[RMDB]
RNA sequence: GGGAACGACUCGAGUAGAGUCGAAAAUCGUCAUCGACGAGGGCCCGCUUUAUUUCUGGUUACCCUGCUUGGCGUGUCUGCUCGCGGUCGCGGAGCUGCAGCUGCGCAGCUUGCGGCUGACCGUGGCACGUUUUAUUAAUUUCGAUUAAUAAAACGUAAAAGAAACAACAACAACAAC
Reactivity to 2A3 in 0.01 (KOAc 150mM, MgCl2 10mM, bicine 150mM(pH8.5), 24C), signal-to-noise 8, nucleotides 027 to 126: u030c010g020u000c020a190u110c210g120a120c030g050a020g000g010g020c010c070c020g000c030u130u200u160a250u060u200u050c080u080g030g020u040u130a070c000c010c010u010g020c030u050u060g030g000c010g020u040g030u020c050u050g000c050u060c070g010c010g000g000u000c010g000c010g020g010a000g000c000u020g000c010a060g020c050u210g060c060g000c040a020g010c000u020u110g300c050g050g000c040u100g000a010c000c000g010u010g010g000c010
Reactivity to DMS in 0.01 (KOAc 150mM, MgCl2 10mM, bicine 150mM(pH8.5), 24C), signal-to-noise 9, nucleotides 027 to 126: u000c010g020u000c010a110u010c190g000a120c020g000a030g010g000g010c050c000c020g010c160u000u000u010a060u010u000u000c060u000g010g010u000u000a130c040c020c010u000g000c060u000u000g010g000c050g010u000g010u000c040u000g010c010u010c050g020c010g000g010u000c010g000c000g000g000a010g000c000u000g010c000a150g020c190u010g010c180g010c010a010g010c010u000u000g010c010g000g000c000u010g010a010c010c000g030u000g010g010c040
Chemical mapping of a 177-nucleotide RNA with 2A3 and DMS.
The 2A3 profile rests on 15,448 reads.
The RNA was probed in 150 mM KOAc, 10 mM MgCl2 and 150 mM bicine (pH 8.5) at 24 C.